The record gives the reactivity of an RNA of 177 nucleotides to DMS and 2A3.
Values cover nucleotides 27 to 126.
The reactions ran in a buffer of 150 mM KOAc, 10 mM MgCl2 and 150 mM bicine (pH 8.5), at 24 C.
For DMS the reverse transcriptase was MarathonRT.
For 2A3 the reverse transcriptase was SuperScript II with manganese.
RNA sequence: GGGAACGACUCGAGUAGAGUCGAAAAGGAAAUAAUGCACAUAAUCCAGUCGCAGACGCUAAAAAUAACGCUGCGUCGCGACGGAUGUGGCAACGCACACCGAAGUGCAAACGCUAGCGUAAAAAAACUUCGUAAAUAGAUUCGUCUAUUUACGAAGAAAAGAAACAACAACAACAAC
Reactivity to DMS in 0.01 (KOAc 150mM, MgCl2 10mM, bicine 150mM(pH8.5), 24C), signal-to-noise 5, nucleotides 027 to 126: g010g000a060a090a080u020a070a100u010g010c020a070c030a060u010a160a070u000c020c010a170g040u000c000g030c010a120g030a010c020g010c010u000a000a040a060a110a100u000a080a070c160g010c150u000g010c000g010u000c010g010c010g010a020c010g000g010a010u000g000u010g000g010c030a070a080c180g010c020a010c040a090c040c060g000a050a100g020u000g000c040a040a090a100c130g010c090u000a050g010c020g000u010a000a010a050a070a070a050a130
Reactivity to 2A3 in 0.01 (KOAc 150mM, MgCl2 10mM, bicine 150mM(pH8.5), 24C), signal-to-noise 6, nucleotides 027 to 126: g080g010a060a100a020u170a060a080u140g050c030a040c010a220u190a210a080u120c010c030a050g000u010c000g000c050a070g000a010c010g000c030u080a070a040a050a100a120u240a190a040c090g030c170u060g000c010g000u000c000g000c000g000a000c000g000g000a000u000g000u000g000g000c010a020a050c060g000c020a010c000a020c030c080g060a120a030g030u020g000c000a080a040a040c060g010c080u090a040g040c030g040u090a100a030a010a010a000a030a100